RNA sequence: GGGAACGACUCGAGUAGAGUCGAAAAGAUAUGGACAGUCCCAGGCUUUUGACGAGCCUCGGAAACGAGAAGCUCGAUAAGCCUGGUCUGUCCUAAGUCAAAACCCCAGUGGUUCGCCACUGGGGAAGUACACUUAGCUCUUCGGAGCUAAGUGUACAAAAGAAACAACAACAACAAC
Reactivity to DMS in 0.01 (KOAc 150mM, MgCl2 10mM, bicine 150mM(pH8.5), 24C), signal-to-noise 2, nucleotides 027 to 126: g000a060u000a300u000g010g000a040c000a010g000u000c300c010c020a000g010g000c000u000u010u000u010g010a150c110g010a000g000c020c000u000c000g000g000a100a070a100c000g000a000g000a120a100g030c000u000c000g020a090u000a050a020g000c000c020u000g020g000u000c010u000g000u010c000c050u000a000a050g010u000c020a120a060a130a180c000c000c000c000a050g030u000g000g020u020u020c200g000c030c000a010c000u000g000g010g000g000a000a030
Reactivity to 2A3 in 0.01 (KOAc 150mM, MgCl2 10mM, bicine 150mM(pH8.5), 24C), signal-to-noise 1, nucleotides 027 to 126: g000a000u060a020u130g000g000a000c000a010g030u110c080c030c000a010g020g000c010u140u200u060u220g200a160c030g000a000g010c000c000u000c000g020g020a080a040a040c010g010a000g020a260a030g000c010u000c000g040a060u030a090a000g020c010c000u010g000g000u000c000u010g010u000c000c000u000a030a000g030u010c000a050a080a100a250c000c000c000c000a000g000u010g080g050u040u100c300g040c130c000a010c000u000g000g000g000g000a020a000

The record gives the reactivity of an RNA of 177 nucleotides to DMS and 2A3. The reactions ran in a buffer of 150 mM KOAc, 10 mM MgCl2 and 150 mM bicine (pH 8.5), at 24 C. Values are in units of 0.01, from 0 to 300, in steps of 10. For DMS the reverse transcriptase was MarathonRT. The DMS profile rests on 1,217 reads.